[RMDB]
RNA sequence: GGGAACGACUCGAGUAGAGUCGAAAAGUGGUUUGUGUAUCCCACACUGUUACUUCCGGUAACUAGGAGUUUGCAGCGACAUAAGUUUCGUCCUAAAAGGACUCAUCAGGUAGCCUAAUAGACUACGCAGUACUAACGGGUUCGCCCGUUAGUACUGAAAAGAAACAACAACAACAAC
Reactivity to 2A3 in 0.01 (KOAc 150mM, MgCl2 10mM, bicine 150mM(pH8.5), 24C), signal-to-noise 2, nucleotides 027 to 126: g050u040g060g160u050u120u130g110u020g040u080a050u010c010c030c010a010c000a000c020u040g020u060u010a020c020u170u040c030c090g080g000u040a040a020c000u010a170g130g000a040g020u020u080u130g060c010a040g030c030g080a020c020a030u090a090a170g010u050u120u130c080g010u000c000c000u150a190a150a020a060g000g020a000c000u010c070a090u030c000a050g080g000u000a000g000c000c000u070a140a100u060a110g010a030c020u020a010c060g000
Reactivity to DMS in 0.01 (KOAc 150mM, MgCl2 10mM, bicine 150mM(pH8.5), 24C), signal-to-noise 4, nucleotides 027 to 126: g030u000g000g000u000u000u010g020u000g010u000a090u000c030c000c010a300c030a060c050u000g000u010u010a020c020u000u000c060c060g030g020u000a060a060c140u010a090g000g010a060g010u000u000u000g010c050a050g030c030g010a060c070a070u010a040a020g000u000u020u010c120g020u000c010c010u000a070a060a120a200g020g000a020c030u000c100a050u000c080a060g010g010u000a010g020c010c000u010a100a080u000a150g010a010c020u000a020c050g020

Source: RMDB library VIROID, as collected in RNAgym.
An RNA of 177 nucleotides, treated with 2A3 and DMS and read out base by base.
Reactivities are given for positions 27 through 126.